An RNA of 207 nucleotides, treated with DMS and 2A3 and read out base by base.
[RMDB]
RNA sequence: GGGAACGACUCGAGUAGAGUCGAAAAUGCGCUUUCGAGCGCACUGUCUCCUAAGUCAGCUAUCUUGGAUUUAGCUAGGGAGCGUUAUCGGAAACGAUAACGCGAAGAACUAGCUUGUCAGAUACGCUGAUAUGGAUUUUGCGUGAUUCGUCACGAAUCAAAAUGGUGGGUUCGCCCACCAUUUUGAAAAAGAAACAACAACAACAAC
Reactivity to DMS in 0.01 (KOAc 150mM, MgCl2 10mM, bicine 150mM(pH8.5), 24C), signal-to-noise 2, nucleotides 027 to 156: u000g020c020g010c000u000u000u000c280g010a020g040c020g020c000a010c000u000g010u000c060u000c030c020u030a100a230g020u000c000a020g040c010u000a000u000c000u060u020g020g020a050u000u020u000a030g020c000u000a010g000g000g000a300g000c010g000u000u010a010u000c010g000g000a170a130a300c000g000a010u000a000a030c020g080c000g000a020a120g000a120a170c000u010a000g000c000u000u000g000u000c000a060g010a050u000a020c240g040c000u000g000a020u000a060u000g030g000a200u000u000u000u000g050c060g020u000g020a050u000u020c200g040u000c090a100c060g000a030a150
Reactivity to 2A3 in 0.01 (KOAc 150mM, MgCl2 10mM, bicine 150mM(pH8.5), 24C), signal-to-noise 3, nucleotides 027 to 156: u030g000c000g000c000u130u070u250c300g140a020g020c000g060c000a010c040u070g110u090c030u050c010c010u050a170a040g030u000c000a000g000c000u010a010u010c010u090u300g130g000a110u300u300u190a010g000c000u000a000g030g000g000a040g000c000g000u000u000a000u000c000g030g050a100a040a060c010g000a010u000a000a020c010g000c000g010a050a000g000a000a000c000u000a000g000c000u000u000g030u020c000a020g010a000u000a040c150g010c010u000g000a000u000a030u010g030g030a040u090u120u130u270g080c020g030u100g010a000u060u060c140g100u030c090a010c040g050a050a060
Reactivities are given for positions 27 through 156.
For 2A3, 2,448 sequencing reads were counted.